An RNA of 177 nucleotides, treated with DMS and 2A3 and read out base by base. For DMS the reverse transcriptase was MarathonRT. The reactions ran in a buffer of 150 mM KOAc, 10 mM MgCl2 and 150 mM bicine (pH 8.5), at 24 C.
[RMDB]
RNA sequence: GGGAACGACUCGAGUAGAGUCGAAAAGCUCUGCGAGACAGAUCGAACAACAAAGAGAGAUCGAAAAUCUUAGAGGAGAGAACGAAUCUGUAGACUUCACUAGGACAUUGUCGAUCAGAGGUCCAAAGACCAUGCAUUGCUUCGGCGAUGUAUGGUCAAAAGAAACAACAACAACAAC
Reactivity to DMS in 0.01 (KOAc 150mM, MgCl2 10mM, bicine 150mM(pH8.5), 24C), signal-to-noise 9, nucleotides 027 to 126: g010c000u000c000u000g000c050g010a300g000a020c030a070g010a040u000c020g010a300a250c050a070a090c260a070a150a100g010a060g010a300g000a020u000c010g000a070a060a120a240u000c010u000u000a000g000a050g010g000a020g010a090g010a120a040c070g000a120a120u040c140u030g020u010a050g010a130c010u000u000c000a080c020u010a010g000g000a030c120a070u010u010g010u000c010g000a200u000c010a030g000a040g000g000u000c010c020a080a080a070
Reactivity to 2A3 in 0.01 (KOAc 150mM, MgCl2 10mM, bicine 150mM(pH8.5), 24C), signal-to-noise 9, nucleotides 027 to 126: g030c000u000c000u000g010c010g010a030g000a020c010a020g020a030u010c020g050a080a050c040a070a030c040a030a300a010g120a010g010a000g000a010u010c010g040a030a040a020a060u000c000u000u020a020g010a050g030g010a010g010a010g050a050a020c040g040a100a160u110c100u150g040u060a020g070a060c000u000u010c010a010c030u000a000g000g020a010c030a110u090u150g030u020c000g000a010u020c010a000g010a010g020g040u010c010c010a040a030a010